Chemical mapping of a 207-nucleotide RNA with 2A3. The RNA was probed in 150 mM KOAc, 10 mM MgCl2 and 150 mM bicine (pH 8.5) at 24 C. For 2A3, 576 sequencing reads were counted. The data come from the RNA Mapping Database (RMDB), library M2RFPK.
RNA sequence: GGGAACGACUCGAGUAGAGUCGAAAAUAUUUUUCAUACAGCGAACGGCACAAGACUUCGAACAUUAUAGCAGUUAGUAGUUGCCUAAACCCAUUGCAAUAUAUGGGACAGUAGAGGUCGCAAGCCUAAAAGCUUCCGCCCUUCGGGGCGGAAGCAAGUUACGGUUAUACUUCGGUAUAACCGUAACAAAAGAAACAACAACAACAAC
Reactivity to 2A3 in 0.01 (KOAc 150mM, MgCl2 10mM, bicine 150mM(pH8.5), 24C), signal-to-noise 1, nucleotides 027 to 156: u070a080u030u180u030u150u190c050a030u110a150c070a020g020c050g120a030a020c000g000g020c010a040c010a080a050g030a010c000u000u010c000g070a070a030c030a060u140u140a150u170a160g030c090a000g030u050u070a000g060u100a000g050u110u090g000c000c010u090a120a080a080c010c000c000a000u010u010g000c000a010a000u050a000u040a020u270g000g040g000a010c030a000g000u000a000g010a010g010g020u000c010g000c090a030a030g010c000c020u060a070a070a020a000g000c000u000u000c000c000g300c060c060c010u030u100c240g090g000g000g000c060g050g000a000a000g060c010a000a000